[RMDB]
An RNA of 177 nucleotides, treated with DMS and 2A3 and read out base by base. Source: RMDB library OK2TST, as collected in RNAgym. Values cover nucleotides 27 to 126. 2A3 adducts were read by reverse transcription with SuperScript II with manganese. The reactions ran in a buffer of 150 mM KOAc, 10 mM MgCl2 and 150 mM bicine (pH 8.5), at 24 C. The 2A3 profile rests on 1,186 reads.
RNA sequence: GGGAACGACUCGAGUAGAGUCGAAAAUGGUUGCCUCAAACGUCGAGACACCACUUUGCCUAGUCCUCUUACGCAGCGCUUUAAAGAGGGAAGCGUAGGAUUCGUCGAUACGCAGCGCUACGCGGGGUAGCCGCACUCAUUUCGAUGAGUGCGGCUAAAAAGAAACAACAACAACAAC
Reactivity to DMS in 0.01 (KOAc 150mM, MgCl2 10mM, bicine 150mM(pH8.5), 24C), signal-to-noise 2, nucleotides 027 to 126: u010g000g010u030u000g020c040c000u000c000a070a160a130c300g040u010c180g000a040g000a000c000a020c020c000a060c020u040u000u020g000c030c020u000a150g040u000c010c090u000c090u000u000a140c100g000c030a040g010c010g000c000u000u010u000a120a070a120g010a070g000g010g030a120a110g030c000g020u000a050g010g000a070u010u010c130g020u000c090g000a110u000a060c030g000c010a050g020c010g010c010u000a010c030g000c100g000g000g000g020
Reactivity to 2A3 in 0.01 (KOAc 150mM, MgCl2 10mM, bicine 150mM(pH8.5), 24C), signal-to-noise 2, nucleotides 027 to 126: u000g040g040u060u190g010c000c010u030c000a120a170a160c180g150u220c150g050a000g000a000c020a010c030c000a020c060u060u050u100g050c000c000u010a010g110u060c000c010u040c000u040u120a000c060g000c010a070g000c030g060c060u090u080u170a110a150a000g070a040g050g020g020a100a020g000c060g000u000a010g080g020a110u130u150c090g060u000c030g090a040u010a070c020g000c050a010g000c000g000c010u070a040c010g000c030g030g070g030g000